[RMDB]
RNA sequence: GGGAACGACUCGAGUAGAGUCGAAAAUUCAAGUUUGCUAAUAUCCGCUUGGCCCACUGGCCAAUGCAAGUCAUGUGGCCAACCCCAGAGUUAGUGUGGGGGACUACACAAGAGUUUGGAAACAGGGAGGUAUGAUUCCUUGGGAGCCAUUAGUAUAGGUUUUAAUGAUCUUCGGAUCAUUAAAACCAAAAGAAACAACAACAACAAC
Reactivity to 2A3 in 0.01 (KOAc 150mM, MgCl2 10mM, bicine 150mM(pH8.5), 24C), signal-to-noise 1, nucleotides 027 to 156: u080u040c010a020a000g030u070u060u070g020c030u100a100a070u090a120u100c000c060g010c070u070u070g000g000c000c000c040a040c040u010g060g150c000c000a060a110u090g030c000a160a000g030u110c010a000u100g030u040g100g000c000c020a040a070c040c000c000c000a010g050a020g270u070u240a060g050u170g020u070g130g010g000g040g010a040c040u080a040c130a030c030a070a040g070a000g020u080u230u140g070g020a060a060a000c030a040g000g000g000a040g000g010u130a050u210g070a080u100u090c000c040u030u050g020g000g000a030g140c080c000a050u070u070a010g040u150a000u270a060